[RMDB]
RNA sequence: GGGAACGACUCGAGUAGAGUCGAAAAGUAAUAGAUAACUGGAUGCAGCGUAGGCGUCAACGCAUAUCCAGUACGAAUGGUACCUGUAAAUAAAAUAUGGCGCCUAGUACAAGUACCAACAGAACGAUAAGCGAUGGUGAUGUCAAUCACAUUUGCAGCCACCUUUUACUUUCGAGUAAAAGGUGGCAAAAGAAACAACAACAACAAC
Reactivity to DMS in 0.01 (KOAc 150mM, MgCl2 10mM, bicine 150mM(pH8.5), 24C), signal-to-noise 1, nucleotides 027 to 156: g010u000a060a120u000a080g040a100u000a120a020c030u100g020g000a060u000g040c050a010g020c010g070u000a130g010g010c050g000u010c040a130a030c000g070c000a090u040a080u000c020c000a080g010u000a100c080g010a090a070u020g020g100u000a020c040c070u000g080u000a070a100a110u000a050a150a050a150u000a050u010g050g020c030g040c040c010u000a070g040u010a020c040a050a000g040u000a030c040c000a090a080c210a110g000a090a110c070g000a170u000a080a120g000c030g010a070u000g030g060u000g060a020u010g000u010c220a130a090u000c050a020c010a050u020u000u010g020c010a080
Reactivity to 2A3 in 0.01 (KOAc 150mM, MgCl2 10mM, bicine 150mM(pH8.5), 24C), signal-to-noise 2, nucleotides 027 to 156: g050u090a020a070u110a070g180a100u120a150a030c000u030g010g000a050u070g150c300a130g030c250g000u020a060g010g000c000g000u000c000a000a010c000g000c010a000u000a020u270c000c000a000g010u010a000c000g070a150a060u050g000g000u010a010c000c000u000g010u000a000a110a170u160a080a080a110a010u180a020u010g000g000c000g000c000c000u010a010g000u000a010c000a010a010g020u010a010c010c000a010a020c060a030g120a050a010c050g040a070u070a120a000g010c020g050a010u080g090g040u030g000a030u030g110u300c040a080a000u050c010a010c030a030u050u080u230g010c020a020